[RMDB]
RNA sequence: GGGAACGACUCGAGUAGAGUCGAAAACGAAUUCGGCGGUGCUGCCGCCGACCAGCACUGUCGGUCCACCGUCGUGUCCGAUGUCGGUGGCGGUGCUGCGCAGGUGGCGUACGAGGUCGAUGGCCUACAUCGACCCGGACUUCGGUCCGGGUCGAUGAAAAGAAACAACAACAACAAC
Reactivity to DMS in 0.01 (KOAc 150mM, MgCl2 10mM, bicine 150mM(pH8.5), 24C), signal-to-noise 2, nucleotides 027 to 126: c070g000a070a130u010u000c030g010g030c000g010g010u000g000c020u020g000c030c010g020c000c000g000a010c030c060a060g010c010a000c010u020g030u010c050g010g010u010c160c300a090c020c010g020u000c020g020u000g010u000c070c080g010a110u010g010u000c000g010g010u000g010g010c020g000g010u000g000c010u010g010c040g030c090a120g000g000u000g010g010c010g010u000a030c060g010a040g030g000u000c020g000a080u010g010g000c040c020u000a120
Reactivity to 2A3 in 0.01 (KOAc 150mM, MgCl2 10mM, bicine 150mM(pH8.5), 24C), signal-to-noise 1, nucleotides 027 to 126: c000g030a030a080u160u080c030g040g000c030g030g000u020g000c040u100g000c020c000g000c000c000g020a000c010c000a000g000c000a010c020u190g050u160c090g080g050u120c080c070a220c130c000g020u030c040g010u020g050u080c080c070g120a190u190g010u030c000g000g000u020g010g010c010g010g020u020g000c000u030g000c030g000c030a040g030g070u040g030g030c010g000u020a020c050g050a080g070g050u060c040g030a060u080g050g030c020c010u060a040